[RMDB]
The data come from the RNA Mapping Database (RMDB), library M2PK90. Chemical mapping of a 177-nucleotide RNA with DMS. The reactions ran in a buffer of 150 mM KOAc, 10 mM MgCl2 and 150 mM bicine (pH 8.5), at 24 C. In probing experiments dimethyl sulfate is read out at A N1 and C N3, which are open when not base-paired. Reactivities are given for positions 27 through 126.
RNA sequence: GGGAACGACUCGAGUAGAGUCGAAAAUUGUGGUCAAGACCUUGGCGUAGUAUCCAAGGUUGUCAAGGUUCCUAUUGACUUAACAAUGAUUGAGUUUAUGUUAUCGUGUAAGGAUGGACAGGGGAAAUAAGAUCCACUAAUUCGUUAGUGGAUCUUAAAAAGAAACAACAACAACAAC
Reactivity to DMS in 0.01 (KOAc 150mM, MgCl2 10mM, bicine 150mM(pH8.5), 24C), signal-to-noise 9, nucleotides 027 to 126: u000u000g030u000g000g010u000c050a060a090g000a030c000c000u000u000g000g010c210g010u000a170g020u010a130u000c040c040a030a030g000g000u000u010g010u010c090a060a060g010g000u000u000c050c080u000a130u000u000g010a020c010u000u010a090a030c030a040a040u000g000a160u010u010g010a090g010u000u000u000a040u020g010u010u000a060u000c050g010u010g010u010a080a080g000g000a060u000g010g000a030c040a060g000g000g000g000a090a070a120